Chemical mapping of a 177-nucleotide RNA with DMS and 2A3. For 2A3 the reverse transcriptase was SuperScript II with manganese. The reactions ran in a buffer of 150 mM KOAc, 10 mM MgCl2 and 150 mM bicine (pH 8.5), at 24 C. It was measured as part of the RMDB library TTRDES. Reactivities are rounded to 0.1 and cut off at 0 and 3. For 2A3, 2,243 sequencing reads were counted. The DMS profile rests on 1,965 reads.
RNA sequence: GGGAACGACUCGAGUAGAGUCGAAAAAAAAAGAUAUGGACAGUCUACCCACCCUCCGUGGGACGAAGAACUUGGAUCGGAAACGAUCCAAGGGAGUCCCAGGAGGAGGACUGUCCUAAGUCAAAAACUUACUAUUACCGUUCGCGGUAAUAGUAAGAAAAGAAACAACAACAACAAC
Reactivity to DMS in 0.01 (KOAc 150mM, MgCl2 10mM, bicine 150mM(pH8.5), 24C), signal-to-noise 2, nucleotides 027 to 126: a010a060a130a150a110g000a060u010a090u000g000g000a010c000a010g010u000c010u000a190c070c020c090a300c060c010c000u000c000c000g020u000g030g010g000a010c010g000a080a060g010a060a170c010u010u000g000g010a000u010c000g000g010a020a030a060c000g000a000u000c000c000a010a000g020g000g000a020g010u000c000c010c010a190g000g000a030g020g000a060g000g010a000c000u000g000u000c000c000u000a000a060g000u010c040a110a080a080a090a160
Reactivity to 2A3 in 0.01 (KOAc 150mM, MgCl2 10mM, bicine 150mM(pH8.5), 24C), signal-to-noise 1, nucleotides 027 to 126: a010a050a000a010a060g030a040u080a040u080g000g000a010c010a000g010u050c000u030a160c080c100c000a010c020c010c010u010c020c080g300u240g000g010g020a000c000g180a240a060g030a010a000c000u000u000g000g000a000u000c030g000g060a030a060a010c020g020a000u000c000c000a000a000g000g000g000a000g010u000c000c000c010a000g010g010a010g030g000a000g010g020a000c000u000g000u000c000c000u010a020a000g020u020c010a000a000a040a120a170